[RMDB]
RNA sequence: GGGAACGACUCGAGUAGAGUCGAAAAUCAAAGUUGAUGAUAUUUUUUUAGGCGAUGAUUCGGAAAAACCGAAAUUUUAGGAGGCGUAACUAUGAACGAAUUACAAACAUUCAAUUUUGAAGAAUUACCAGUAAGAACGUUAUCCAUAGACGACGAAUAAUCAUAAAUGCUUCGGCAUUUAUGAUUAAAAAGAAACAACAACAACAAC
Reactivity to 2A3 in 0.01 (KOAc 150mM, MgCl2 10mM, bicine 150mM(pH8.5), 24C), signal-to-noise 1, nucleotides 027 to 156: u070c010a020a060a030g020u030u040g020a110u070g030a080u020a200u170u120u040u080u040u100u110a050g000g070c000g030a050u010g010a020u010u010c000g040g000a100a090a060a010a000c000c030g000a000a060a110u140u040u010u090a110g040g020a010g010g040c020g020u020a030a030c000u020a070u120g050a040a010c060g010a030a000u120u080a100c040a010a090a020c030a020u060u130c000a070a130u070u030u110u160g060a090a030g050a000a010u050u090a060c030c000a020g050u080a050a020g020a070a040c050g000u010u020a050u020c010c000a000u010a000g020a010c060g060a000c050g010a030a060
Reactivity to DMS in 0.01 (KOAc 150mM, MgCl2 10mM, bicine 150mM(pH8.5), 24C), signal-to-noise 1, nucleotides 027 to 156: u020c060a030a160a120g030u000u000g000a130u000g010a160u000a010u010u000u010u000u000u000u000a180g010g000c030g010a120u010g000a120u000u020c000g000g020a080a070a050a130a090c000c000g020a050a050a180u000u000u000u010a090g020g010a160g000g040c050g000u000a060a030c060u000a110u010g020a030a100c030g020a060a040u000u000a140c060a090a070a100c100a250u010u000c020a020a060u000u000u000u000g000a060a120g000a070a100u000u000a060c010c030a210g020u000a080a150g000a030a060c020g030u000u000a110u000c040c070a110u000a140g000a070c030g010a090c030g020a090a190

An RNA of 207 nucleotides, treated with 2A3 and DMS and read out base by base. For 2A3 the reverse transcriptase was SuperScript II with manganese. DMS adducts were read by reverse transcription with MarathonRT. The DMS profile rests on 1,965 reads. The RNA was probed in 150 mM KOAc, 10 mM MgCl2 and 150 mM bicine (pH 8.5) at 24 C.